[RMDB]
RNA sequence: GGGAACGACUCGAGUAGAGUCGAAAAGAUAUGGAAUAAUUCGGUCCUACAAAGGCCGAUAAGCUAUUGAUCGGAAACGAUCACUAGCUUUUGACGGCUUUCAAAGGGACCGAAUUAUUCCUAAGUCGACAAGACAAGUGUUCGCACUUGUCUUGUCAAAAGAAACAACAACAACAAC
Reactivity to DMS in 0.01 (KOAc 150mM, MgCl2 10mM, bicine 150mM(pH8.5), 24C), signal-to-noise 2, nucleotides 027 to 126: g020a070u000a300u020g000g010a080a020u000a010a000u000u000c000g000g010u010c000c020u020a130c300a070a070a030g010g030c010c000g020a100u000a020a010g000c000u000a000u000u000g000a000u000c030g000g000a130a120a260c000g000a020u000c010a000c030u010a000g020c000u000u000u000u000g010a270c190g000g000c000u000u010u000c140a050a110a300g000g000g060a000c010c000g000a000a010u000u000a000u000u010c000c000u010a000a060g000u000c090